[RMDB]
RNA sequence: GGGAACGACUCGAGUAGAGUCGAAAACCUACUCAAUACGUCCUCGUCGUACAGAACGGUAACAUGUUUUCCGAACAUCCGCGCUUGGGUAUGCGAGUAUACACCUUACCCAACCCUCGCCAACGGGAGUGCAUCCACGAGUUCGCUCGUGGAUGAAGUCAGAAACAAUCUUCGGAUUGUUUCUGACAAAAGAAACAACAACAACAAC
Reactivity to DMS in 0.01 (KOAc 150mM, MgCl2 10mM, bicine 150mM(pH8.5), 24C), signal-to-noise 1, nucleotides 027 to 156: c050c000u030a090c040u010c010a050a090u010a060c000g000u010c010c020u020c010g060u010c120g000u000a140c000a090g000a050a080c030g010g050u000a090a060c140a100u000g020u000u010u000u000c040c050g020a090a150c020a180u000c000c010g040c070g080c060u000u010g010g010g050u010a050u000g040c020g030a080g080u000a120u000a150c060a060c120c010u020u000a060c000c000c010a040a030c050c010c030u000c120g000c100c050a110a100c060g050g000g040a070g030u030g020c000a000u010c000c000a010c000g000a010g030u000u000c300g030c010u010c010g070u010g010g020a000u000g020a020a040
Reactivity to 2A3 in 0.01 (KOAc 150mM, MgCl2 10mM, bicine 150mM(pH8.5), 24C), signal-to-noise 4, nucleotides 027 to 156: c000c010u000a050c040u050c030a020a110u080a150c050g070u050c020c020u060c020g110u050c030g030u060a050c030a130g090a170a040c030g050g040u100a070a040c070a150u110g070u050u080u090u030c040c020g020a040a010c030a070u030c020c040g050c000g010c060u020u040g010g000g010u080a140u120g060c100g050a080g060u010a020u040a040c050a120c040c020u020u060a020c000c000c000a000a020c000c010c000u020c010g050c030c010a060a060c040g050g020g030a100g020u080g030c000a000u000c000c000a000c000g000a010g000u030u030c190g050c100u000c000g010u000g010g020a000u000g000a010a000